[RMDB]
RNA sequence: GGGAACGACUCGAGUAGAGUCGAAAACAGGUAGGUGGUGGAGCAGCCAAUGGUUUGGAAGCGAGUGGGUCACCAAAAACUCCUUCCUCAUCUCUACAUGUGGUACACAGACAGCCUGCCAGAUGUGGUCUAACAGGAAGUUCGCUUCCUGUUAGACAAAAGAAACAACAACAACAAC
Reactivity to DMS in 0.01 (KOAc 150mM, MgCl2 10mM, bicine 150mM(pH8.5), 24C), signal-to-noise 4, nucleotides 027 to 126: c080a120g030g020u000a030g010g020u000g020g030u010g020g010a130g010c150a100g010c070c040a080a080u010g000g010u010u000u000g000g000a040a000g010c190g010a020g020u000g010g010g000u020c250a130c120c120a030a030a070a170a030c030u000c000c020u000u000c010c010u000c060a050u000c050u000c140u010a070c140a080u000g020u000g010g000u010a050c090a060c050a100g000a170c120a210g000c010c030u000g000c020c010a050g000a120u010g000u010g020
Reactivity to 2A3 in 0.01 (KOAc 150mM, MgCl2 10mM, bicine 150mM(pH8.5), 24C), signal-to-noise 3, nucleotides 027 to 126: c030a010g020g010u050a000g010g020u060g080g100u070g000g050a070g050c100a030g030c060c010a020a070u090g030g040u000u050u070g020g010a020a000g010c070g080a010g010u040g010g110g060u200c080a140c100c000a110a000a030a030a080c010u010c000c000u010u060c010c000u020c030a050u000c030u030c040u130a140c020a080u140g030u010g130g060u050a020c050a000c000a060g180a090c010a010g020c020c020u010g010c010c000a020g020a070u200g070u100g120